[RMDB]
RNA sequence: GGGAACGACUCGAGUAGAGUCGAAAACGCUGGGACCCUAAGGCCCUAUUUGUCAGCUGAAGCGCGCACGGCUUGGAUUUAAUAGUGGCUAUGGGUCCUGUGCUGAAGCGCGCACGGCAACCGAAAGGUGCGACACACCAGGUUUCGACCUGGUGAAGGCAUAACUUUACUUCGGUAAAGUUAUGCCAAAAGAAACAACAACAACAAC
Reactivity to 2A3 in 0.01 (KOAc 150mM, MgCl2 10mM, bicine 150mM(pH8.5), 24C), signal-to-noise 3, nucleotides 027 to 156: c020g000c010u030g000g000g020a000c000c000c040u080a230a200g230g000c000c000c010u000a110u010u060u090g170u060c080a000g000c000u030g010a200a030g070c030g000c030g000c060a010c010g020g000c030u110u250g140g040a070u190u300u180a090a050u060a050g200u300g110g000c020u050a090u110g010g000g000u030c020c000u010g010u030g000c040u100g000a150a040g000c020g020c020g000c050a000c040g060g000c050a100a050c000c000g010a100a040a050g030g000u000g030c010g090a020c020a000c010a020c080c010a000g000g000u030u120u110c210g170a070c010c010u000g000g000u000g010a020a030